[RMDB]
RNA sequence: GGGAACGACUCGAGUAGAGUCGAAAACUUCAUAGAGAUAAAUUAUUAUGCCUUACGCCUGGUUGACCAGACUUUAGAGGUCGCUGUUCUGAGCUUAACGUCUGUUUUAACUGAAACGCCGCAUUCUCACAUUUAUGUAUUUCGAUACAUAAAUGUGAAAAGAAACAACAACAACAAC
Reactivity to DMS in 0.01 (KOAc 150mM, MgCl2 10mM, bicine 150mM(pH8.5), 24C), signal-to-noise 5, nucleotides 027 to 126: c030u000u020c040a090u020a130g000a170g010a120u010a060a070a100u010u020a090u020u010a080u010g010c020c030u000u000a100c140g010c030c020u000g010g010u000u010g000a070c210c040a060g010a040c060u000u010u000a150g020a090g010g010u000c030g020c070u000g010u010u010c090u000g010a080g010c040u000u000a060a070c100g000u000c020u000g000u000u000u000u000a040a130c090u000g010a070a070a070c080g010c050c060g010c130a060u010u020c060u010
Reactivity to 2A3 in 0.01 (KOAc 150mM, MgCl2 10mM, bicine 150mM(pH8.5), 24C), signal-to-noise 9, nucleotides 027 to 126: c020u120u100c050a090u210a100g050a000g050a070u130a200a190a030u140u180a080u100u080a050u160g020c010c000u040u050a030c030g010c010c010u040g020g010u050u060g030a050c010c020a010g030a050c020u110u110u100a100g020a030g090g020u030c010g010c030u020g040u100u010c030u050g040a050g040c020u040u040a050a010c040g030u000c010u010g060u030u040u010u050a050a050c030u030g050a090a030a020c040g030c030c010g040c040a070u090u010c010u000